Source: RMDB library 15KLIB, as collected in RNAgym. Structure probing data (DMS and 2A3) for a 170-nucleotide construct. For 2A3 the reverse transcriptase was SuperScript II with manganese. Reactivities are given for positions 27 through 129. For 2A3, 2,292 sequencing reads were counted.
[RMDB]
RNA sequence: GGGAACGACUCGAGUAGAGUCGAAAAACCCUCCCGAUCCGAGGGGCCCAACCACCAAGUUUGGAGAGCACUCCGGGCCGAAUGGUCGAGUAGCACUCAGAGGGAGGAAUCCACACGGAGUAGAGCAGUAGAAACCCCUUCGGGGGUUUCAAAAGAAACAACAACAACAAC
Reactivity to DMS in 0.01 (KOAc 150mM, MgCl2 10mM, bicine 150mM(pH8.5), 24C), signal-to-noise 3, nucleotides 027 to 129: a120c080c010c000u020c010c000c040g000a270u010c000c090g020a000g060g110g040g000c080c040c020a110a040c080c040a070c120c060a090a050g050u020u070u020g000g000a040g000a210g110c230a020c050u040c030c050g010g000g020c030c020g000a270a110u080g000g000u000c050g000a000g050u080a120g040c010a230c030u000c040a060g030a180g000g010g030a010g070g000a130a060u020c030c060a040c080a050c140g020g020a100g000u040a060g000a090g030c120a030g000u010a100
Reactivity to 2A3 in 0.01 (KOAc 150mM, MgCl2 10mM, bicine 150mM(pH8.5), 24C), signal-to-noise 2, nucleotides 027 to 129: a000c000c000c000u000c000c000c010g080a110u060c000c000g000a030g020g010g020g000c000c000c000a000a000c000c010a030c070c040a090a080g010u040u030u000g090g000a070g020a020g070c040a060c120u030c010c000g000g000g000c020c010g060a070a120u210g000g000u000c030g000a020g020u020a010g000c010a040c030u030c030a000g020a030g080g000g000a000g000g010a000a000u090c030c000a020c000a000c040g070g000a020g000u100a050g060a010g090c050a010g000u100a020